[RMDB]
RNA sequence: GGGAACGACUCGAGUAGAGUCGAAAAGACGGUGCGCCGGUCGACGGCGCUGCUGGGCGGCACCGGUGCAGUAGUGCAAGAAGGUGGGCCUCAGGUGGUCGACGGGGUGAUGUGGUUCUGACCGGCGUUAAUGAGCCGUGUUCGCACGGCUCAUUAAAAAAGAAACAACAACAACAAC
Reactivity to 2A3 in 0.01 (KOAc 150mM, MgCl2 10mM, bicine 150mM(pH8.5), 24C), signal-to-noise 2, nucleotides 027 to 126: g050a020c080g040g020u080g040c000g000c020c000g050g000u030c030g020a040c000g000g000c010g010c030u000g020c060u030g020g010g020c000g050g130c000a000c020c030g000g000u030g000c010a090g030u250a070g050u080g040c010a070a080g120a090a070g190g000u020g000g050g010c000c020u050c040a050g060g000u110g120g000u140c060g050a030c050g000g040g000g080u180g050a090u110g000u050g070g070u080u000c010u100g000a000c000c000g010g000c010g010
Reactivity to DMS in 0.01 (KOAc 150mM, MgCl2 10mM, bicine 150mM(pH8.5), 24C), signal-to-noise 2, nucleotides 027 to 126: g010a110c090g000g040u000g010c020g020c030c000g000g000u000c030g010a080c040g000g000c030g020c000u010g000c100u000g020g000g000c040g010g000c030a030c010c020g000g020u000g000c010a040g010u080a110g010u000g000c000a050a010g020a110a140g010g020u010g010g000g010c000c020u020c050a050g010g020u020g000g010u010c010g000a050c000g000g000g010g000u000g000a060u030g020u000g010g010u010u000c080u000g000a040c000c010g000g000c040g020
Conditions: 150 mM KOAc, 10 mM MgCl2 and 150 mM bicine (pH 8.5), 24 C. An RNA of 177 nucleotides, treated with 2A3 and DMS and read out base by base. For DMS the reverse transcriptase was MarathonRT. The data come from the RNA Mapping Database (RMDB), library RFM100. For 2A3, 1,041 sequencing reads were counted.